The data come from the RNA Mapping Database (RMDB), library RNAMAK.
The record gives the reactivity of an RNA of 207 nucleotides to 2A3 and DMS.
Conditions: 150 mM KOAc, 10 mM MgCl2 and 150 mM bicine (pH 8.5), 24 C.
RNA sequence: GGGAACGACUCGAGUAGAGUCGAAAAUCCUAAGUCUUUGCCUACUGUACUUGGAUUUAGCUCUGACAUGGUGGUUCGGAAACGAACCACCAACAGCAGAGCUUGUCAGUACAGGGGCAAAGAUAUGGAAAAAGGAACUAAGUUCGCUUAGUUCCAACAUGCAAAGAUGGUUCGCCAUCUUUGCAUGAAAAGAAACAACAACAACAAC
Reactivity to 2A3 in 0.01 (KOAc 150mM, MgCl2 10mM, bicine 150mM(pH8.5), 24C), signal-to-noise 5, nucleotides 027 to 156: u030c010c000u040a130a040g020u020c000u000u020u000g020c010c020u300a300c000u300g000u000a000c010u080u230g180g000a060u300u300u090a000g000c000u000c000u010g060a160c030a090u050g000g000u000g000g010u000u000c010g030g030a070a100a070c000g000a010a010c000c000a000c010c000a020a000c010a000g030c000a000g000a000g020c000u000u000g000u010c000a000g010u000a000c000a000g000g000g000g020c000a000a000a000g000a000u000a040u030g000g050a080a010a010a110a130g010g010a000a000c000u000a000a010g020u040u080c180g070c150u000u000a000g000u010u010c000c000a000a000
Reactivity to DMS in 0.01 (KOAc 150mM, MgCl2 10mM, bicine 150mM(pH8.5), 24C), signal-to-noise 1, nucleotides 027 to 156: u000c000c010u020a100a300g030u000c000u000u000u000g000c010c000u010a170c000u030g010u000a010c030u000u000g060g010a040u000u010u000a000g040c020u000c010u000g010a080c070a300u010g010g030u000g010g010u000u000c010g100g000a200a120a300c000g050a000a030c040c000a000c000c000a010a010c080a230g020c010a000g000a010g010c000u000u000g010u000c000a030g000u010a000c000a010g010g000g000g000c000a000a020a000g000a010u000a100u030g000g010a050a050a130a170a150g000g020a040a020c010u000a000a010g020u010u020c300g000c010u000u000a030g000u000u000c000c000a060a080

For DMS, 2,170 sequencing reads were counted. The 2A3 profile rests on 3,843 reads.